[RMDB]
RNA sequence: GGGAACGACUCGAGUAGAGUCGAAAAGAUAUGGAUUCAAACUUACCGUGAACUACAGCCGCCCUCGCGGUCGGAAACGACCGAACUACGAGUAACAAGCUGCACGGUAAGUUUGAAUCCUAAGUCACAUCUAUCCCUCCUUCGGGAGGGAUAGAUGAAAAGAAACAACAACAACAAC
Reactivity to DMS in 0.01 (KOAc 150mM, MgCl2 10mM, bicine 150mM(pH8.5), 24C), signal-to-noise 1, nucleotides 027 to 126: g010a060u000a300u030g050g000a000u000u000c000a040a000a000c000u000u000a000c000c000g050u010g030a080a100c120u020a300c010a000g000c030c010g000c300c300c000u000c000g100c000g000g000u010c000g000g000a080a170a200c070g040a010c020c000g000a070a120c190u040a300c040g000a030g010u000a090a110c190a170a090g000c010u000g000c000a000c000g000g000u000a020a010g000u000u000u000g000a000a000u000c000c000u060a000a080g020u000c030a090
Chemical mapping of a 177-nucleotide RNA with DMS. The data come from the RNA Mapping Database (RMDB), library TTRINS. DMS adducts were read by reverse transcription with MarathonRT.